This 207-nucleotide RNA was probed chemically with DMS and 2A3.
In probing experiments dimethyl sulfate is read out at A N1 and C N3, which are open when not base-paired.
Values are in units of 0.01, from 0 to 300, in steps of 10.
2A3 adducts were read by reverse transcription with SuperScript II with manganese.
Conditions: 150 mM KOAc, 10 mM MgCl2 and 150 mM bicine (pH 8.5), 24 C.
[RMDB]
RNA sequence: GGGAACGACUCGAGUAGAGUCGAAAAGCGUAACGGCUGGGUGUAACCCAACUCUAGGUGUGCUGAUUAGCGGGCUUGACUCCGUAACAAAUAGGCACUGGUGGUAAAAAGCAUCCCACCUACUCCCAAAGCUCCAAAUUCUUCGGAAUUUGGAGAAGAUCGUAUUUAUCUUCGGAUAAAUACGAUCAAAAGAAACAACAACAACAAC
Reactivity to DMS in 0.01 (KOAc 150mM, MgCl2 10mM, bicine 150mM(pH8.5), 24C), signal-to-noise 2, nucleotides 027 to 156: g010c060g000u010a120a080c200g030g040c000u000g020g000g050u010g000u000a100a300c060c000c020a040a050c010u000c050u010a110g020g040u000g000u000g020c010u000g010a120u000u010a260g020c000g020g040g000c060u000u000g010a170c110u010c000c010g040u000a050a160c140a020a060a080u010a090g000g000c010a100c040u000g020g000u000g000g020u010a070a100a050a130a220g020c040a110u000c040c000c010a060c010c010u000a050c060u000c000c030c020a070a100a150g010c010u000c000c000a000a020a000u010u000c000u020u000c300g040g030a000a010u000u010u000g000g000a000g010a010a060
Reactivity to 2A3 in 0.01 (KOAc 150mM, MgCl2 10mM, bicine 150mM(pH8.5), 24C), signal-to-noise 5, nucleotides 027 to 156: g040c030g010u040a020a070c070g060g010c100u030g000g020g000u040g030u070a070a080c010c010c030a070a150c080u130c110u160a060g060g050u050g010u030g080c020u020g020a150u050u080a030g020c010g000g000g010c050u130u160g030a090c020u000c050c000g000u010a040a020c010a050a080a070u120a050g020g000c010a000c040u030g000g020u030g000g020u060a090a110a080a040a040g050c010a040u100c000c000c000a000c000c010u020a030c030u040c010c000c000a030a070a020g020c000u000c000c000a000a000a010u000u000c000u010u040c100g070g000a000a010u000u000u000g000g000a000g000a000a000